[RMDB]
RNA sequence: GGGAACGACUCGAGUAGAGUCGAAAAGAUAUGGAUCUGGGAGCUUUUGACGCUCCGUCGGAAACGACAGGAGCGAUAAGCUUAGGAUCCUAAGUCAAACUCUUAGGGUGUUCGCACCCUAAGAGAAUCUCUACUGAAACUUCGGUUUCAGUAGAGAAAAAGAAACAACAACAACAAC
Reactivity to DMS in 0.01 (KOAc 150mM, MgCl2 10mM, bicine 150mM(pH8.5), 24C), signal-to-noise 3, nucleotides 027 to 126: g000a040u010a250u030g000g020a000u000c010u000g000g010g010a000g000c010u000u010u000u010g010a200c060g010c000u000c000c000g030u020c020g010g000a110a060a180c010g020a020c010a120g050g000a020g010c000g020a070u010a000a030g010c020u000u000a300g000g000a000u000c010c000u010a000a070g000u000c040a110a130a200c000u010c000u000u000a000g000g000g010u000g010u000u020c220g030c000a010c000c030c000u010a000a000g000a010g010a070a040
Reactivity to 2A3 in 0.01 (KOAc 150mM, MgCl2 10mM, bicine 150mM(pH8.5), 24C), signal-to-noise 3, nucleotides 027 to 126: g020a000u070a040u120g010g010a010u000c030u040g300g300g050a010g000c020u180u190u210u300g210a060c000g000c000u040c010c000g000u010c000g000g000a080a040a050c040g040a010c170a300g010g010a000g000c020g030a040u010a080a000g000c000u000u000a010g010g000a000u000c000c000u000a040a000g020u010c030a130a030a070c010u020c000u000u020a000g030g000g010u020g070u100u080c290g060c080a010c000c000c000u000a000a000g000a000g000a000a000
Structure probing data (DMS and 2A3) for a 177-nucleotide construct. Source: RMDB library TTRDEL, as collected in RNAgym. The reactions ran in a buffer of 150 mM KOAc, 10 mM MgCl2 and 150 mM bicine (pH 8.5), at 24 C. Reactivities are given for positions 27 through 126. For 2A3 the reverse transcriptase was SuperScript II with manganese.